[RMDB]
The record gives the reactivity of an RNA of 207 nucleotides to DMS and 2A3.
RNA sequence: GGGAACGACUCGAGUAGAGUCGAAAACUGAUCAAACAUGCGCUUCCAAUAGUAGAAGGACGUUAAGCAUUUAUCAUUGAACUAUAAUUGUUCAUUGAAGUCAUUGAUGCAAACUCCUUGGUCACACACACAUACGGCGCGGAAGGCGUGUUUGCUGCAUAGCAAGUAGGUUCGCCUACUUGCUAUGAAAAGAAACAACAACAACAAC
Reactivity to DMS in 0.01 (KOAc 150mM, MgCl2 10mM, bicine 150mM(pH8.5), 24C), signal-to-noise 5, nucleotides 027 to 156: c040u010g010a120u000c010a040a060a040c040a050u000g010c000g030c010u000u000c010c030a150a170u010a120g020u000a110g010a050a040g020g000a050c070g020u000u000a080a230g020c000a030u000u000u010a130u010c010a030u000u010g020a020a020c010u000a120u000a100a150u000u000g020u010u000c000a030u000u020g020a050a150g010u000c150a180u000u000g000a030u000g030c000a230a040a070c020u000c020c010u000u000g020g010u000c050a060c070a110c090a110c130a110c050a130u000a070c050g000g020c070g000c170g000g020a060a060g000g000c020g050u000g010u000u000u000g000c070u000g000
Reactivity to 2A3 in 0.01 (KOAc 150mM, MgCl2 10mM, bicine 150mM(pH8.5), 24C), signal-to-noise 9, nucleotides 027 to 156: c040u050g020a090u120c010a010a000a000c000a010u010g010c300g090c060u010u000c010c000a080a120u090a130g100u040a030g070a110a010g020g000a020c150g020u030u040a120a070g000c010a010u030u050u070a100u040c000a000u000u010g000a000a000c020u040a030u160a300a190u240u150g000u000u000c000a010u000u020g020a050a020g080u140c080a100u070u250g010a000u010g000c000a020a030a020c010u000c000c000u020u040g070g030u140c020a050c000a000c000a000c010a000c000a160u080a170c110g070g010c080g030c010g070g000a010a000g000g000c000g000u000g000u000u000u000g000c010u030g010

Conditions: 150 mM KOAc, 10 mM MgCl2 and 150 mM bicine (pH 8.5), 24 C.